Notes
An RNA of 177 nucleotides, treated with DMS and 2A3 and read out base by base. For DMS, 1,361 sequencing reads were counted.
RNA sequence: GGGAACGACUCGAGUAGAGUCGAAAAUCCAACAAGGGGUGCGGAGCUCAGUCCACAGAUUAUCUCGAUGAUCAUAUCGACGAUAUUCACCUUCUUGCUAGCGGAUCUUUCGAGAUCCGUUUUUUCAGUGCUUAGUUAUGUUCGCAUAACUAAGCACAAAAGAAACAACAACAACAAC
Reactivity to DMS in 0.01 (KOAc 150mM, MgCl2 10mM, bicine 150mM(pH8.5), 24C), signal-to-noise 2, nucleotides 027 to 126: u000c020c010a080a100c060a010a010g000g010g000g010u000g040c170g000g010a070g040c210u010c270a120g020u000c010c010a100c130a150g020a020u010u000a010u020c000u000c000g000a000u000g000a130u010c300a120u020a050u000c020g000a020c170g000a020u000a010u000u020c010a120c070c040u010u000c000u000u000g020c110u000a120g020c000g010g000a020u000c000u000u000u010c200g010a010g000a000u000c000c000g010u000u000u000u010u010u000c110a130
Reactivity to 2A3 in 0.01 (KOAc 150mM, MgCl2 10mM, bicine 150mM(pH8.5), 24C), signal-to-noise 3, nucleotides 027 to 126: u010c000c000a000a020c010a020a030g000g020g030g010u070g010c040g070g000a030g020c080u060c220a030g170u000c010c010a090c050a030g100a050u060u030a010u040c000u000c010g030a040u060g060a140u220c070a110u150a020u240c020g000a020c070g000a020u000a040u030u010c020a030c030c000u150u200c010u030u110g060c070u060a010g020c000g000g000a000u000c000u010u070u080c120g050a020g000a010u020c010c010g020u010u020u000u000u030u050c020a010